[RMDB]
RNA sequence: GGGAACGACUCGAGUAGAGUCGAAAAGGAUACCCAGCACAUCCUGAUCGAAGCCAUGAAGCUGGCGUUUGCCGAUGUCCAUGCGCACGUGGCCGACGCGGCGCACAUACGCAUUCGCGUCGAACAAACUCAGUGACCAUUUCGAUGGUCACUGAGUAAAAGAAACAACAACAACAAC
Reactivity to DMS in 0.01 (KOAc 150mM, MgCl2 10mM, bicine 150mM(pH8.5), 24C), signal-to-noise 3, nucleotides 027 to 126: g000g000a110u020a090c070c010c070a080g030c110a120c200a060u000c020c020u000g010a170u010c090g000a110a150g000c020c020a030u000g000a060a230g020c030u000g000g010c010g010u010u010u000g050c180c070g010a050u000g010u010c020c070a000u020g020c020g040c110a160c080g040u000g000g010c020c010g000a060c020g000c030g010g020c100g000c040a040c190a080u000a090c100g010c010a140u000u000c060g010c000g030u000c020g000a120a070c140a070a110
Reactivity to 2A3 in 0.01 (KOAc 150mM, MgCl2 10mM, bicine 150mM(pH8.5), 24C), signal-to-noise 3, nucleotides 027 to 126: g070g010a030u120a130c030c000c020a000g030c040a030c000a040u050c000c020u060g050a050u150c080g060a090a020g020c010c000a030u050g090a060a010g030c040u010g000g000c020g020u030u060u150g170c030c030g010a040u040g050u070c020c010a080u180g020c000g000c030a030c070g020u030g010g010c000c020g000a020c000g000c020g000g010c010g110c030a040c020a110u300a070c090g020c020a020u140u110c030g000c000g000u030c000g000a020a010c020a030a090